[RMDB]
RNA sequence: GGGAACGACUCGAGUAGAGUCGAAAAGAUGUCGCGACUCGCAUCACUCCUCUCGAUCAAGGUGGUCCGAGAGCAUUUCCUUGCCGUGCGUGGUAGUGAAAUGCGCGCGCUGUUACCAGCCAGCUGGCGCGAGCCGUAGCUUCGGCUACGGCUCGCGAAAAGAAACAACAACAACAAC
Reactivity to 2A3 in 0.01 (KOAc 150mM, MgCl2 10mM, bicine 150mM(pH8.5), 24C), signal-to-noise 1, nucleotides 027 to 126: g080a000u020g130u110c050g000c000g030a050c010u000c060g020c010a000u020c000a000c010u070c000c000u000c040u000c060g090a070u040c140a080a020g110g020u120g070g090u100c040c020g030a080g000a010g090c000a020u090u030u000c030c040u000u060g140c000c000g140u220g120c020g090u270g090g000u090a040g010u020g150a060a060a060u020g020c000g000c000g000c000g050c020u040g020u030u160a080c000c020a040g070c000c060a040g060c080u080g030g000
Conditions: 150 mM KOAc, 10 mM MgCl2 and 150 mM bicine (pH 8.5), 24 C. The record gives the reactivity of an RNA of 177 nucleotides to 2A3. Source: RMDB library OK1LIB, as collected in RNAgym. The 2A3 profile rests on 473 reads. For 2A3 the reverse transcriptase was SuperScript II with manganese. Reactivities are given for positions 27 through 126.